[RMDB]
RNA sequence: GGGAACGACUCGAGUAGAGUCGAAAAACAUGCAAUCAAGCAAGCAUAUGAAAUGACUAAUUCAAAUCAUCAUAUGCUAAAAUCAAUUAGUCGAGAUUUGUUCAGACAAGCUGAAGAUGAUUUGAAAUCCGAUAUUAUAUUUCGAUAUAAUAUCGGAAAAAGAAACAACAACAACAAC
Reactivity to DMS in 0.01 (KOAc 150mM, MgCl2 10mM, bicine 150mM(pH8.5), 24C), signal-to-noise 6, nucleotides 027 to 126: a110c110a080u000g010c020a100a080u010c170a110a080g020c100a110a080g000c030a020u010a060u000g010a060a090a100u000g010a110c100u010a100a140u000u010c020a020a020a020u010c000a010u000c000a030u000a110u000g000c000u000a030a060a040a040u000c210a070a050u010u000a080g020u000c030g000a110g000a090u010u010u010g000u010u000c040a300g010a050c050a060a020g000c030u000g000a150a140g000a010u000g010a010u000u000u000g000a020a050a110
Reactivity to 2A3 in 0.01 (KOAc 150mM, MgCl2 10mM, bicine 150mM(pH8.5), 24C), signal-to-noise 4, nucleotides 027 to 126: a000c030a020u060g020c020a040a190u130c030a140a020g070c030a050a020g000c000a060u120a050u180g150a120a110a060u150g040a060c070u110a070a070u060u040c020a000a000a010u000c000a000u000c000a010u030a010u300g000c000u020a030a010a000a050u060c010a000a100u080u060a040g020u020c030g000a010g010a300u040u110u300g090u080u050c020a010g000a040c030a030a000g020c000u010g000a050a030g010a050u020g000a000u000u000u020g030a030a030a020
Record summary: Source: RMDB library OK2TRN, as collected in RNAgym. The record gives the reactivity of an RNA of 177 nucleotides to DMS and 2A3. The reactions ran in a buffer of 150 mM KOAc, 10 mM MgCl2 and 150 mM bicine (pH 8.5), at 24 C. For DMS, 6,196 sequencing reads were counted. For 2A3 the reverse transcriptase was SuperScript II with manganese.